[RMDB]
RNA sequence: GGGAACGACUCGAGUAGAGUCGAAAAUGAGGUUGAUAUUGUCGAUUACCGUAUUACUGCCAAAUCGUUUAGUGACGUUGCGCAGUUCAACGAAAUUUUUCUGAGUCAUAGUGCGCUCCAUUACGCCAGUCGAGUUGUGAUUCGUCACAACUCGACUAAAAGAAACAACAACAACAAC
Reactivity to 2A3 in 0.01 (KOAc 150mM, MgCl2 10mM, bicine 150mM(pH8.5), 24C), signal-to-noise 1, nucleotides 027 to 126: u070g030a040g120g000u050u070g160a020u020a090u160u200g060u060c080g120a090u080u170a020c050c000g010u060a100u000u180a010c020u040g070c010c000a110a040a040u190c060g050u040u210u280a300g030u280g080a010c000g000u000u040g010c070g000c050a010g000u040u060c040a030a050c020g090a050a070a070u080u040u010u000u000c020u130g010a050g000u000c060a120u050a080g050u070g040c090g000c030u000c080c000a090u150u140a000c070g000c110c030
Reactivity to DMS in 0.01 (KOAc 150mM, MgCl2 10mM, bicine 150mM(pH8.5), 24C), signal-to-noise 1, nucleotides 027 to 126: u010g000a150g000g020u000u000g000a100u000a060u000u010g020u010c020g060a160u000u000a090c060c040g050u000a090u010u000a080c000u000g000c050c060a020a090a100u010c020g020u000u000u010a120g000u000g030a060c000g010u000u000g010c270g030c040a040g020u000u000c160a040a010c000g030a040a050a180u000u000u000u000u010c030u000g040a130g060u000c030a150u000a040g010u000g000c010g000c020u010c010c010a060u030u000a080c100g010c110c070